[RMDB]
The record gives the reactivity of an RNA of 177 nucleotides to DMS and 2A3. Values cover nucleotides 27 to 126. 2A3 adducts were read by reverse transcription with SuperScript II with manganese. The 2A3 profile rests on 1,313 reads. For DMS the reverse transcriptase was MarathonRT. Reactivities are rounded to 0.1 and cut off at 0 and 3.
RNA sequence: GGGAACGACUCGAGUAGAGUCGAAAAGGUUGCGACACGGAAGCCGCUCAACCCUACUUCGCCGAGGCGAUCGAGCUGGCGCGCGCCAUUAACGAUGAGUGGACAUUGAGCCAAAUCGAUUAUUGGCCUGAUCAGCAAACUUCGGUUUGCUGAUCAGAAAAGAAACAACAACAACAAC
Reactivity to DMS in 0.01 (KOAc 150mM, MgCl2 10mM, bicine 150mM(pH8.5), 24C), signal-to-noise 2, nucleotides 027 to 126: g010g010u010u000g010c080g010a080c130a100c130g000g020a140a090g010c030c010g020c040u010c060a100a130c060c010c060u000a070c100u000u000c050g010c030c060g010a190g010g000c000g000a030u000c060g000a060g010c050u010g030g000c040g010c150g020c090g010c000c020a020u000u000a030a030c020g000a010u000g000a170g020u020g000g000a000c020a200u020u010g020a080g020c000c010a040a070a080u000c010g000a160u000u000a040u000u000g010g010c020
Reactivity to 2A3 in 0.01 (KOAc 150mM, MgCl2 10mM, bicine 150mM(pH8.5), 24C), signal-to-noise 2, nucleotides 027 to 126: g070g020u080u060g030c010g010a040c010a020c160g070g080a040a030g000c000c000g030c030u060c020a150a180c020c000c050u040a070c060u050u070c020g040c050c040g040a080g000g060c030g030a070u090c040g010a030g010c040u090g060g000c000g000c000g000c030g000c030c000a000u030u020a020a010c020g010a020u070g040a050g220u090g000g000a010c120a300u170u290g030a050g030c010c010a030a030a000u000c010g060a110u020u020a020u030u080g040g000c060